[RMDB]
RNA sequence: GGGAACGACUCGAGUAGAGUCGAAAAGAUAUGGACACGUUAGCAUAGGAGCUGAUAGCCAACAGCUACGGUUCGGAAACGAACCAGUAGACAUGGCUGCAGCUCCUAUGCUAACGUGUCCUAAGUCGUUACACAGAUAGUUCGCUAUCUGUGUAACAAAAGAAACAACAACAACAAC
Reactivity to DMS in 0.01 (KOAc 150mM, MgCl2 10mM, bicine 150mM(pH8.5), 24C), signal-to-noise 4, nucleotides 027 to 126: g010a070u000a300u000g000g020a000c000a000c000g000u010u000a010g010c010a020u000a000g010g010a030g010c010u000g000a070u010a020g020c000c010a040a120c300a250g010c000u000a000c000g000g000u000u000c000g000g010a090a110a250c010g010a000a020c010c000a160g030u000a010g000a040c110a260u000g010g010c000u010g000c000a020g000c000u000c000c000u000a000u000g020c000u010a000a000c000g000u000g010u000c000c000u000a010a090g010u000c140

The record gives the reactivity of an RNA of 177 nucleotides to DMS. The RNA was probed in 150 mM KOAc, 10 mM MgCl2 and 150 mM bicine (pH 8.5) at 24 C. DMS adducts were read by reverse transcription with MarathonRT. The data come from the RNA Mapping Database (RMDB), library TTRINS.